Annotation
This 177-nucleotide RNA was probed chemically with DMS and 2A3. The data come from the RNA Mapping Database (RMDB), library RFMREP. For DMS the reverse transcriptase was MarathonRT. 2A3 adducts were read by reverse transcription with SuperScript II with manganese. High DMS reactivity at an A or C suggests that its Watson-Crick edge is free. For DMS, 1,052 sequencing reads were counted. For 2A3, 1,465 sequencing reads were counted. The reactions ran in a buffer of 150 mM KOAc, 10 mM MgCl2 and 150 mM bicine (pH 8.5), at 24 C.
[RMDB]
RNA sequence: GGGAACGACUCGAGUAGAGUCGAAAAGUGGAGCUUCGGCUCCACAAAACCCCACACUGACGUGUGGGGCCGUCUUUUUGACUGUAACAAGGGGUCUGCCCGUGAAAGCCAGUUCUUCGGAACUGGCCUUACUUCCGAUCUUCGGAUCGGAAGUAAGAAAAGAAACAACAACAACAAC
Reactivity to DMS in 0.01 (KOAc 150mM, MgCl2 10mM, bicine 150mM(pH8.5), 24C), signal-to-noise 1, nucleotides 027 to 126: g030u000g000g000a000g000c030u000u040c240g000g000c000u000c010c000a060c060a000a090a140a210c010c010c000c000a050c000a010c000u050g010a080c300g000u000g030u000g000g000g000g000c020c070g020u000c050u010u000u000u010u000g010a010c000u000g000u010a080a060c060a160a270g010g000g000g010u000c010u010g020c010c020c010g000u000g010a050a060a090g000c000c000a000g010u000u000c010u000u000c130g020g010a010a000c000u000g000g020c000
Reactivity to 2A3 in 0.01 (KOAc 150mM, MgCl2 10mM, bicine 150mM(pH8.5), 24C), signal-to-noise 2, nucleotides 027 to 126: g030u030g000g020a000g000c000u020u080c240g200g010c010u010c000c000a000c000a010a020a020a010c020c000c030c010a000c020a000c000u300g140a080c090g000u000g000u020g030g000g000g040c020c010g110u050c010u020u030u010u000u010g010a020c010u010g080u250a130a050c020a070a120g020g030g010g000u010c010u080g040c000c000c000g050u090g090a170a080a000g010c000c010a010g010u010u000c000u040u060c150g050g000a000a010c010u000g010g000c000